[RMDB]
This 177-nucleotide RNA was probed chemically with DMS and 2A3. Source: RMDB library 15KREP, as collected in RNAgym. For 2A3, 1,101 sequencing reads were counted. For 2A3 the reverse transcriptase was SuperScript II with manganese.
RNA sequence: GGGAACGACUCGAGUAGAGUCGAAAAAUCAGGUAGUCACAUAUCCCUCGCUUAACUACGCUGGGGCUUUGUGGGACAUUACAGUUAUAAACAAUGUGGACAAUGAAAUUGUUAAGUCUUCAGAUGUGUCUAUUAGAUUCUUCGGAAUCUAAUAGACAAAAGAAACAACAACAACAAC
Reactivity to DMS in 0.01 (KOAc 150mM, MgCl2 10mM, bicine 150mM(pH8.5), 24C), signal-to-noise 2, nucleotides 027 to 126: a100u010c050a090g010g010u000a040g000u000c020a020c040a010u000a050u000c010c010c010u000c300g010c030u020u000a070a160c210u010a090c240g010c010u000g010g030g010g000c180u000u010u000g030u000g000g000g030a050c050a080u000u010a030c070a040g020u000u010a080u010a060a090a110c080a040a060u020g010u000g000g000a040c040a060a050u000g010a080a090a190u000u000g000u010u000a050a150g000u000c020u000u000c040a090g010a070u000g050u010
Reactivity to 2A3 in 0.01 (KOAc 150mM, MgCl2 10mM, bicine 150mM(pH8.5), 24C), signal-to-noise 2, nucleotides 027 to 126: a010u090c050a030g060g000u100a020g100u060c010a000c000a050u060a040u040c000c010c000u010c010g010c010u190u080a200a120c060u170a090c140g030c030u010g000g000g000g000c020u000u010u000g010u010g020g010g050a000c020a020u040u100a000c010a020g050u140u020a160u100a180a060a000c040a050a000u100g030u030g060g000a010c010a020a090u180g070a120a090a090u110u030g060u070u080a080a030g000u000c040u070u080c050a020g010a150u160g060u020